[RMDB]
RNA sequence: GGGAACGACUCGAGUAGAGUCGAAAAGAUGGGUCCGAUGGAUUAAUGCGUCGCCGGCCAUUGGAUCCUGAUUGAUAGAUUGAGGGCGACGGUCGGAUCACUCGGUAAUUCGGUGCUCAACGAGUGAUCCGUGAUGAUAGUUAAGAGGAGCACCUAAGCCAUCAUAUCAUUUCGAUGAUAUGAUGGCAAAAGAAACAACAACAACAAC
Reactivity to 2A3 in 0.01 (KOAc 150mM, MgCl2 10mM, bicine 150mM(pH8.5), 24C), signal-to-noise 1, nucleotides 027 to 156: g100a030u120g000g000g000u000c000c000g010a000u000g000g040a010u110u120a130a080u250g100c000g000u000c010g000c000c000g000g000c010c000a000u000u000g000g000a000u000c000c000u020g020a030u030u070g030a010u010a130g090a060u020u160g130a090g000g000g090c000g000a000c000g030g010u020c000g000g000a000u000c020a000c010u000c000g030g080u090a120a060u180u190c090g000g000u000g010c000u000c010a000a020c000g000a000g000u010g000a000u000c010c000g000u030g000a040u040g000a010u010a130g200u250u210a070a030g060a060g130g010a010g000c000a000c010c000u000a080a000

Source: RMDB library OK3TST, as collected in RNAgym. An RNA of 207 nucleotides, treated with 2A3 and read out base by base. Conditions: 150 mM KOAc, 10 mM MgCl2 and 150 mM bicine (pH 8.5), 24 C. 2A3 adducts were read by reverse transcription with SuperScript II with manganese.